Structure probing data (DMS and 2A3) for a 177-nucleotide construct. For 2A3 the reverse transcriptase was SuperScript II with manganese. The DMS profile rests on 1,864 reads. Values are in units of 0.01, from 0 to 300, in steps of 10. The reactions ran in a buffer of 150 mM KOAc, 10 mM MgCl2 and 150 mM bicine (pH 8.5), at 24 C. The 2A3 profile rests on 1,132 reads. It was measured as part of the RMDB library RFM100.
RNA sequence: GGGAACGACUCGAGUAGAGUCGAAAAUCUUUGUUUGGCAGAUCUGUAAUUGUAUCAGAGCGGCCUGAAACUACCACAGAGAUCAAAAAGGAGGGAGGCUGUGCUGAGAACGUUUUCAGGCUCUCAGAUCAAUAUCGACCUUCGGGUCGAUAUUGAUAAAAGAAACAACAACAACAAC
Reactivity to DMS in 0.01 (KOAc 150mM, MgCl2 10mM, bicine 150mM(pH8.5), 24C), signal-to-noise 2, nucleotides 027 to 126: u010c000u000u020u000g010u040u000u000g000g040c150a090g030a000u010c000u020g030u000a030a140u000u030g010u000a110u010c000a060g010a000g070c170g000g020c000c000u030g020a010a030a020c020u000a100c150c100a090c020a000g000a010g000a060u030c190a000a010a120a080a160g010g010a100g020g000g000a040g000g010c000u000g030u000g010c060u010g000a130g010a100a270c110g000u000u010u010u010c000a100g010g000c000u000c020u000c040a110g010
Reactivity to 2A3 in 0.01 (KOAc 150mM, MgCl2 10mM, bicine 150mM(pH8.5), 24C), signal-to-noise 3, nucleotides 027 to 126: u010c000u000u010u010g060u030u040u020g040g060c140a020g000a090u040c050u050g080u070a060a090u130u080g080u060a120u140c020a040g000a010g020c020g010g010c000c000u020g000a000a010a000c030u020a040c010c000a040c000a010g010a000g010a160u080c130a090a130a090a060a040g130g000a020g000g130g000a020g080g000c040u030g010u000g000c040u020g030a040g020a180a020c070g080u030u030u070u110c000a000g010g000c010u020c010u000c020a040g000